[RMDB]
RNA sequence: GGGAACGACUCGAGUAGAGUCGAAAAGAAAGAAGAAACUCGCCAAAAGCGAGUAGGAUCCUCUGGCAUUGAACUGAAGACAGAGGAUCCAGCGAGCAAAAAGCUCGCAUUCAGUUCAAUGCCGAAACGGAUAGUCCUGGUUCGCCAGGACUAUCCGAAAAGAAACAACAACAACAAC
Reactivity to 2A3 in 0.01 (KOAc 150mM, MgCl2 10mM, bicine 150mM(pH8.5), 24C), signal-to-noise 1, nucleotides 027 to 126: g100a020a060a000g090a070a010g080a100a170a010c020u000c000g080c000c080a130a150a000a000g020c000g000a000g000u000a010g010g020a060u030c000c040u010c010u070g000g020c000a020u010u020g010a010a000c000u000g000a000a020g090a080c210a070g190a100g080g010a010u010c000c000a000g000c000g000a000g000c030a010a110a300a020a010g000c000u000c000g010c000a000u010u050c000a000g000u010u000c000a000a000u050g000c030c000g050a040a010a000
An RNA of 177 nucleotides, treated with 2A3 and read out base by base.
2A3 adducts were read by reverse transcription with SuperScript II with manganese.
The 2A3 profile rests on 706 reads.